[RMDB]
RNA sequence: GGGAACGACUCGAGUAGAGUCGAAAAGGGCCGUUCACUGGAUCCGAAGCCUCUAGAAGGAUAAUAUAGGCACUCCAUACCCUACUCCGACUCAAUACGUCCCCGUCGUACAGGAUGGUAACAUAUCGAACACAACCUAACUUCGGUUAGGUUGUAAGCAAAGUCUAAAGUUCGCUUUAGACUUUGCAAAAGAAACAACAACAACAAC
Reactivity to 2A3 in 0.01 (KOAc 150mM, MgCl2 10mM, bicine 150mM(pH8.5), 24C), signal-to-noise 3, nucleotides 027 to 156: g030g000g020c140c040g110u150u120c090a040c140u030g050g000a100u140c070c000g040a070a010g040c030c000u010c020u060a160g050a200a090g110g000a050u100a290a100u190a080u070a110g030g000c020a040c070u060c010c010a060u060a110c010c000c000u050a070c050u040c040c030g050a030c010u040c040a040a150u070a120c010g030u030c000c010c000c010g050u040c010g010u040a050c040a040g130g000a060u070g020g060u060a060a030c010a090u150a100u140c060g060a070a010c020a000c000a070a010c000c000u000a000a000c000u020u040c110g040g000u000u000a000g000g010u000u000g000u000a000a000
Reactivity to DMS in 0.01 (KOAc 150mM, MgCl2 10mM, bicine 150mM(pH8.5), 24C), signal-to-noise 1, nucleotides 027 to 156: g020g030g030c000c040g080u030u010c060a050c010u000g010g030a110u000c070c030g020a060a160g030c000c020u000c050u000a140g000a100a110g010g000a180u000a060a110u000a140u000a100g000g010c040a050c050u000c040c030a150u000a080c060c030c040u000a060c060u000c020c010g000a040c040u040c030a070a090u010a180c070g030u000c000c010c000c040g020u000c100g030u000a070c140a090g020g000a110u000g050g020u000a050a180c050a110u000a080u020c000g010a050a160c050a040c000a010a010c000c000u020a000a000c000u000u010c200g080g030u010u000a000g000g030u000u000g000u000a060a140
Chemical mapping of a 207-nucleotide RNA with 2A3 and DMS. For DMS, 1,429 sequencing reads were counted. For DMS the reverse transcriptase was MarathonRT. The reactions ran in a buffer of 150 mM KOAc, 10 mM MgCl2 and 150 mM bicine (pH 8.5), at 24 C.